Conditions: 150 mM KOAc, 10 mM MgCl2 and 150 mM bicine (pH 8.5), 24 C.
Chemical mapping of a 177-nucleotide RNA with 2A3 and DMS.
RNA sequence: GGGAACGACUCGAGUAGAGUCGAAAAGCCGAGCUGGUUGUCAUCGUCGGCGUGGCCCUGGCAGCCCUACCUGCUGAGCCACCAUCAGGGCGGCAUCGCGGUUACCGAUAUCGGCGACGGGCCGGCGGAAUAAUAGAACGUUCGCGUUCUAUUAUUCAAAAGAAACAACAACAACAAC
Reactivity to 2A3 in 0.01 (KOAc 150mM, MgCl2 10mM, bicine 150mM(pH8.5), 24C), signal-to-noise 7, nucleotides 027 to 126: g000c010c000g020a070g010c020u170g120g010u040u020g010u030c000a050u050c090g030u000c010g020g030c060g040u110g030g000c000c030c040u040g090g010c050a030g010c020c000c010u040a080c010c030u060g020c040u090g030a010g030c020c010a030c010c000a100u170c110a070g140g030g000c030g010g010c070a150u100c040g000c030g040g010u050u060a040c000c010g010a010u030a020u130c100g010g000c010g010a010c010g030g010g000c010c000g000g000c030g020
Reactivity to DMS in 0.01 (KOAc 150mM, MgCl2 10mM, bicine 150mM(pH8.5), 24C), signal-to-noise 9, nucleotides 027 to 126: g010c010c000g000a120g030c030u000g000g020u000u000g020u010c020a060u010c150g020u000c010g010g010c110g030u010g000g020c010c010c030u010g010g010c140a110g000c060c030c100u010a070c140c020u010g020c010u010g010a110g010c010c010a040c030c050a160u010c170a120g010g010g030c060g000g010c040a070u000c080g010c050g000g000u000u010a110c040c020g000a060u000a080u010c120g010g000c010g000a030c040g000g010g000c000c010g000g000c030g000